[RMDB]
RNA sequence: GGGAACGACUCGAGUAGAGUCGAAAAAGACACGCUUGACGUGACGCGAAAUCAGACGGGUAAGGAAGAACCUGGCUUCCAACAAAAGGGGAUUUCUCACGGGAAAAGGAGUUCAGAGUACUGAAAAAUCGCUCAGCCUAUUCGUAGGCUGAGCGAUAAAAGAAACAACAACAACAAC
Reactivity to 2A3 in 0.01 (KOAc 150mM, MgCl2 10mM, bicine 150mM(pH8.5), 24C), signal-to-noise 1, nucleotides 027 to 126: a040g100a000c000a000c090g090c000u100u170g130a000c030g060u080g020a080c000g040c040g100a000a000a220u160c000a050g000a090c020g050g000g080u030a050a050g050g000a000a050g000a060a210c050c000u000g000g080c000u090u120c050c000a100a090c000a010a000a080a080g000g010g000g010a000u000u000u000c030u030c000a000c080g000g040g110a120a020a000a040g080g030a040g010u010u060c130a050g000a010g030u030a000c050u030g040a000a000a000a000